[RMDB]
RNA sequence: GGGAACGACUCGAGUAGAGUCGAAAAUAAAGGGUCAAAAGGUAUCAUCGAUGCAUGCUUGCAUGCAAUUCGAUGUAUACCUUAGUGACCCGCACUACACUGAGAAAGUAGCAAUUUACUAUGCGAAGCUACGCCUAUCUUUCGAGAUAGGCGUAGCAAAAGAAACAACAACAACAAC
Reactivity to 2A3 in 0.01 (KOAc 150mM, MgCl2 10mM, bicine 150mM(pH8.5), 24C), signal-to-noise 5, nucleotides 027 to 126: u180a020a090a040g000g000g000u010c010a040a020a010a000g010g000u000a000u000c010a000u000c000g010a000u000g000c000a000u000g010c000u100u170g010c000a000u000g000c010a030a140u100u030c000g000a000u000g000u000a000u000a000c000c000u000u000a000g000u010g010a000c000c000c000g000c000a010c000u120a040c040a010c080u130g070a030g090a120a110a030g040u020a010g020c030a040a040u200u180u120a180c090u140a070u190g090c090g080a060a020
Reactivity to DMS in 0.01 (KOAc 150mM, MgCl2 10mM, bicine 150mM(pH8.5), 24C), signal-to-noise 5, nucleotides 027 to 126: u050a070a090a120g000g000g010u000c000a070a070a050a010g000g010u000a000u010c000a000u000c000g030a010u000g020c000a010u000g000c020u030u020g030c000a020u000g000c000a000a080u020u010c000g030a020u000g000u050a000u000a000c000c000u000u000a020g020u000g010a000c000c020c000g000c150a050c080u020a060c110a100c080u000g010a110g010a100a080a050g000u000a060g010c120a070a080u020u010u020a080c110u020a080u010g000c060g010a140a110